This 207-nucleotide RNA was probed chemically with 2A3 and DMS. For 2A3 the reverse transcriptase was SuperScript II with manganese.
[RMDB]
RNA sequence: GGGAACGACUCGAGUAGAGUCGAAAAGAAAGAAAGAAAGCUGACCCUUCUGCUGACGGAUCUUGUGGAGCACCACAGUGCAGAAGGGGAGAGAAGCUGUAAUGCCGACCGUCUGGGCAGCCUUGAAAAAACGGAUUCUUCUUCGGAAGAAUCCGAAGUUACAUUCUUGGUUCGCCAAGAAUGUAACAAAAGAAACAACAACAACAAC
Reactivity to 2A3 in 0.01 (KOAc 150mM, MgCl2 10mM, bicine 150mM(pH8.5), 24C), signal-to-noise 2, nucleotides 027 to 156: g040a020a000a000g060a020a080a000g080a010a100a020g030c040u060g070a100c020c000c000u000u000c010u020g010c020u030g040a030c020g030g040a100u110c060u170u050g010u030g000g060a110g130c060a060c100c000a000c000a020g030u040g050c000a000g000a000a000g010g000g010g000a000g000a000g000a000a010g000c010u030g020u100a120a080u090g020c000c000g030a060c020c020g020u010c030u050g020g010g000c010a030g060c000c020u060u070g030a110a010a000a000a050a000c000g000g000a000u000u000c000u000u000c000u020u020c090g100g000a000a000g000a020a000u000c000c000g000a000a000
Reactivity to DMS in 0.01 (KOAc 150mM, MgCl2 10mM, bicine 150mM(pH8.5), 24C), signal-to-noise 2, nucleotides 027 to 156: g020a190a090a140g000a160a110a110g000a100a090a090g020c030u010g000a140c010c010c000u010u000c010u010g000c000u000g000a140c030g030g030a110u000c030u010u000g020u010g000g020a220g010c170a090c020c030a030c050a090g030u010g030c000a010g000a060a010g090g000g000g010a000g000a150g010a090a050g000c010u000g050u010a050a210u000g010c000c040g000a110c010c020g010u000c040u000g030g030g000c000a020g020c060c000u020u000g000a010a000a100a080a110a210c020g000g000a030u000u000c000u000u010c000u000u000c300g040g000a030a010g000a030a000u000c000c010g010a000a010